[RMDB]
RNA sequence: GGGAACGACUCGAGUAGAGUCGAAAAGAACUGAAGUUGAAAACGCCAUCAGGUUGUCCCGGGACCGUAUCAAUGAUGUCUUCCAGCUGGAUGACAACAGCCUGGAGUUUCUGGGGAUUCAGCCGACAAUUGAGUGUAGCUUCGGCUACACUCAAUUAAAAGAAACAACAACAACAAC
Reactivity to 2A3 in 0.01 (KOAc 150mM, MgCl2 10mM, bicine 150mM(pH8.5), 24C), signal-to-noise 2, nucleotides 027 to 126: g120a000a020c030u140g050a080a010g030u070u030g070a030a020a000a090c040g010c070c040a070u070c010a020g030g010u000u000g040u070c000c000c000g010g000g000a000c000c010g030u080a040u240c010a090a080u180g020a010u060g020u070c020u030u040c000c000a080g050c120u170g070g030a100u070g060a070c000a020a000c000a030g000c000c070u040g000g000a040g010u010u070u040c050u060g000g000g010g010a020u130u120c000a000g000c000c000g040a060c050
Reactivity to DMS in 0.01 (KOAc 150mM, MgCl2 10mM, bicine 150mM(pH8.5), 24C), signal-to-noise 2, nucleotides 027 to 126: g010a120a140c050u000g030a070a180g000u000u000g000a030a060a090a110c060g000c030c040a100u010c110a110g000g010u000u000g020u020c000c000c020g020g020g000a050c050c040g000u030a050u030c180a080a100u020g000a070u010g000u000c050u020u010c000c030a200g000c040u000g000g000a080u010g010a030c170a050a080c000a020g000c190c060u000g000g020a160g010u020u000u050c020u000g000g000g010g000a150u060u040c070a040g010c030c060g010a080c150